[RMDB]
RNA sequence: GGGAACGACUCGAGUAGAGUCGAAAACUAUUCAUAGUUUGUUCAGACUAGUUCUGUAUGAGCAAAACAGUUUUCGCAAAAAUACCCUGAGUUUCUUACUACCCAUCUAGCACAAAUAUUGCUGAUGUCAUAUAUACAGUUUCGACUGUAUAUAUGAAAAAGAAACAACAACAACAAC
Reactivity to 2A3 in 0.01 (KOAc 150mM, MgCl2 10mM, bicine 150mM(pH8.5), 24C), signal-to-noise 9, nucleotides 027 to 126: c000u030a060u160u170c080a110u070a170g020u010u010u040g010u010u040c000a000g010a020c030u130a090g140u190u070c030u050g020u020a030u030g010a010g000c010a020a010a050a080c030a010g000u000u000u010u020c030g000c060a040a100a040a060a070u090a090c010c010c000u020g020a020g010u020u050u010c000u040u060a080c060u090a070c020c010c000a000u000c090u170a010g010c050a030c040a070a290a190u250a140u150u120g000c010u000g000a010u020g050
Reactivity to DMS in 0.01 (KOAc 150mM, MgCl2 10mM, bicine 150mM(pH8.5), 24C), signal-to-noise 7, nucleotides 027 to 126: c000u000a070u010u000c140a110u010a180g010u010u000u000g000u000u000c000a020g000a030c020u010a110g010u000u000c020u000g010u000a010u000g010a010g000c000a090a070a050a080c120a020g010u000u000u000u000c000g020c090a030a100a090a110a130u020a040c000c010c000u000g010a080g010u000u000u010c060u000u000a130c130u000a130c110c190c010a020u000c010u030a020g010c010a020c300a060a060a130u020a110u020u000g010c010u010g000a030u000g010
Chemical mapping of a 177-nucleotide RNA with 2A3 and DMS. Reactivities are given for positions 27 through 126.